This 207-nucleotide RNA was probed chemically with 2A3. As a SHAPE reagent, 2A3 marks flexible, mostly unpaired nucleotides at the ribose 2'-OH. The data come from the RNA Mapping Database (RMDB), library M2RFPK.

RNA sequence: GGGAACGACUCGAGUAGAGUCGAAAAGAAACUACGUUUCCUUUACACUUCUCAAACCGGGAUCAAGAGAAGCAAAGCAUCCCUCAUAUCCACGAUGGAGGGUGUCGUGGAGUAUACUGUACCAAAAAGAGCGAACACGGCUUCGGCCGUGUUCGAACAGUCAGGGAAUCUUCGGAUUCCCUGACUGAAAAGAAACAACAACAACAAC
Reactivity to 2A3 in 0.01 (KOAc 150mM, MgCl2 10mM, bicine 150mM(pH8.5), 24C), signal-to-noise 1, nucleotides 027 to 156: g020a000a010a020c020u120a050c060g030u050u030u020c020c000u010u060u060a040c050a020c020u010u000c000u020c030a070a130a140c020c100g020g010g050a070u030c090a150a120g010a000g000a060a020g060c100a060a040a000g050c020a020u070c000c120c000u100c010a100u060a050u110c000c000a010c030g000a000u030g110g060a030g120g000g020u060g010u010c000g020u000g000g000a010g010u000a000u010a120c090u100g120u100a080c020c050a090a110a060a000a090g100a000g030c000g000a000a000c000a000c000g000g000c000u000u020c130g050g070c080c000g000u000g000u010u020c000g000a000a000